[RMDB]
RNA sequence: GGGAACGACUCGAGUAGAGUCGAAAACCCCGGGGAAACCUGGAGAGAACUGGCAAAAAAGGACGGUGGGGAGUGCCCAGCGGCCGACAGGAGUAAUUCCCGCCGAAACAGGGUUUUCACCCUUCCUCUAUUAAUCUAUGUUCGCAUAGAUUAAUAGAAAAGAAACAACAACAACAAC
Reactivity to 2A3 in 0.01 (KOAc 150mM, MgCl2 10mM, bicine 150mM(pH8.5), 24C), signal-to-noise 2, nucleotides 027 to 126: c000c000c010c000g000g000g000g000a020a040a010c000c020u030g110g010a030g020a000g000a110a050c120u110g060g000c110a050a070a020a020a140a180g050g020a020c000g070g010u020g010g040g030g000a140g090u120g020c000c000c040a010g020c040g090g030c040c040g050a000c020a040g010g090a060g040u040a020a050u050u000c010c000c030g020c000c000g060a040a040a000c040a030g000g020g020u060u030u110u110c110a180c010c000c010u000u050c000c020u020
Reactivity to DMS in 0.01 (KOAc 150mM, MgCl2 10mM, bicine 150mM(pH8.5), 24C), signal-to-noise 1, nucleotides 027 to 126: c030c000c000c070g000g020g000g000a070a100a150c030c010u000g010g020a160g010a100g000a110a070c090u000g010g000c030a000a070a120a130a110a080g010g010a070c070g000g010u010g010g000g000g010a100g020u010g010c010c030c020a070g020c020g010g000c060c040g000a060c070a030g000g000a070g000u000a070a110u020u000c010c000c030g000c050c020g010a030a070a090c130a070g000g000g020u000u000u000u000c080a090c020c010c000u000u020c040c040u000